Overview: This 177-nucleotide RNA was probed chemically with 2A3 and DMS. Reactivities are given for positions 27 through 126. Conditions: 150 mM KOAc, 10 mM MgCl2 and 150 mM bicine (pH 8.5), 24 C.
[RMDB]
RNA sequence: GGGAACGACUCGAGUAGAGUCGAAAAGCGCGGCGGAGGAGGCUGCUCUGUGCUCGCUGUGCAUGGAACGCCCCAAGACUGUGGCUCUGGGCUGCGGGCACCAGACCUGCGGCCAGUGCGCGGACGAGUCAUCAUCGGGAUUCGUCCCGAUGAUGACAAAAGAAACAACAACAACAAC
Reactivity to 2A3 in 0.01 (KOAc 150mM, MgCl2 10mM, bicine 150mM(pH8.5), 24C), signal-to-noise 1, nucleotides 027 to 126: g020c010g020c040g000g050c000g050g050a040g000g030a040g110g000c120u040g080c010u010c030u070g110u030g060c050u030c020g070c070u090g030u090g050c030a040u080g080g040a100a040c090g030c020c030c000c000a030a050g100a110c040u060g120u070g300g000c000u000c010u090g100g090g070c000u000g000c000g000g030g020c050a040c060c060a080g110a290c000c000u000g000c000g020g030c000c000a000g030u010g000c060g040c050g000g030a050c050g040a070
Reactivity to DMS in 0.01 (KOAc 150mM, MgCl2 10mM, bicine 150mM(pH8.5), 24C), signal-to-noise 1, nucleotides 027 to 126: g060c000g000c000g000g050c130g000g050a120g030g010a070g010g010c200u000g050c080u000c000u000g000u010g020c020u000c050g020c000u000g050u010g040c030a100u000g000g000a140a110c090g000c020c000c000c060a050a160g020a120c100u000g000u000g010g040c030u000c010u000g000g010g020c000u000g010c010g020g030g020c010a120c260c250a100g000a080c040c010u010g000c040g050g000c050c000a040g010u000g010c070g010c050g010g000a080c110g000a070